[RMDB]
RNA sequence: GGGAACGACUCGAGUAGAGUCGAAAAAAGGCUUGGGAACCAAGCUGGUUCGAGCUCUGGUUGAGUUGCUGUUCAAUGAUCCCGAGGUCACCAAGAUCCAAACGGACCCGUCGCCGAGCAACUUGCGCAUAUAGUGCGGAUUCGUCCGCACUAUAUGAAAAGAAACAACAACAACAAC
Reactivity to 2A3 in 0.01 (KOAc 150mM, MgCl2 10mM, bicine 150mM(pH8.5), 24C), signal-to-noise 3, nucleotides 027 to 126: a000a010g070g000c040u060u020g020g050g050a140a080c090c010a020a010g020c030u040g010g070u030u030c020g030a080g090c010u000c010u040g300g000u010u030g000a020g000u030u040g060c090u110g070u140u060c070a090a100u160g020a060u040c010c020c010g000a050g000g020u030c010a040c080c030a070a050g000a080u040c020c000a040a130a040c040g040g000a020c000c030c030g030u060c010g000c030c040g000a020g010c010a020a100c070u060u100g030c070g000
Reactivity to DMS in 0.01 (KOAc 150mM, MgCl2 10mM, bicine 150mM(pH8.5), 24C), signal-to-noise 7, nucleotides 027 to 126: a080a090g010g010c010u000u000g000g010g010a170a290c070c010a020a030g010c040u000g010g000u000u000c030g000a070g010c010u000c020u000g000g010u000u000g000a050g000u000u000g020c080u000g000u000u000c060a110a090u000g010a070u000c020c020c020g000a130g010g000u000c040a080c080c090a080a090g010a070u000c030c060a040a090a130c150g000g000a080c030c020c030g020u000c060g000c030c030g000a080g000c070a050a060c080u000u010g000c110g010